[RMDB]
RNA sequence: GGGAACGACUCGAGUAGAGUCGAAAAGCGGUAUGUAAGCAUGUAGUGCGUGGGUGGCUUGCACUAUAAUCUCAGACAUCAAAAGUUUAAUUGGCGAAAAUAACUACGCUCUCGCUGCGUAAUCGAAGAAUAGUAGAUUAGACGCUUCAUCGCCGCCCCUCAUUGAAAACUUCGGUUUUCAAUGAGGAAAAGAAACAACAACAACAAC
Reactivity to DMS in 0.01 (KOAc 150mM, MgCl2 10mM, bicine 150mM(pH8.5), 24C), signal-to-noise 1, nucleotides 027 to 156: g010c020g030g010u010a030u000g010u000a050a090g010c070a130u010g000u010a040g040u000g020c010g080u000g010g000g040u010g010g030c030u000u000g050c050a010c020u000a040u000a040a110u020c080u000c020a130g020a070c070a060u000c040a090a130a120a200g010u000u000u000a030a070u000u000g010g010c020g020a050a080a060a080u000a030a050c030u000a040c000g000c040u000c040u010c150g010c090u000g010c000g060u000a000a080u010c030g010a150a200g000a080a170u010a100g050u010a150g020a060u010u000a110g030a010c030g010c020u000u010c100a100u000c060g050c000c000g000c130c110
Reactivity to 2A3 in 0.01 (KOAc 150mM, MgCl2 10mM, bicine 150mM(pH8.5), 24C), signal-to-noise 4, nucleotides 027 to 156: g020c010g030g020u060a030u080g070u090a070a000g000c040a030u100g060u140a000g010u000g030c020g000u040g010g000g040u020g020g000c030u050u070g040c000a000c000u090a100u030a180a060u020c020u010c080a040g030a050c010a070u100c010a050a070a100a060g060u090u120u110a140a080u110u110g030g010c030g020a020a050a040a070u140a060a020c050u060a020c040g010c020u020c020u010c050g060c060u060g000c000g030u020a020a020u020c020g020a030a010g030a090a090u090a120g030u010a000g010a020u020u040a080g060a060c060g000c000u010u010c030a050u040c020g000c020c000g000c020c010
The record gives the reactivity of an RNA of 207 nucleotides to DMS and 2A3. It was measured as part of the RMDB library ARCHII.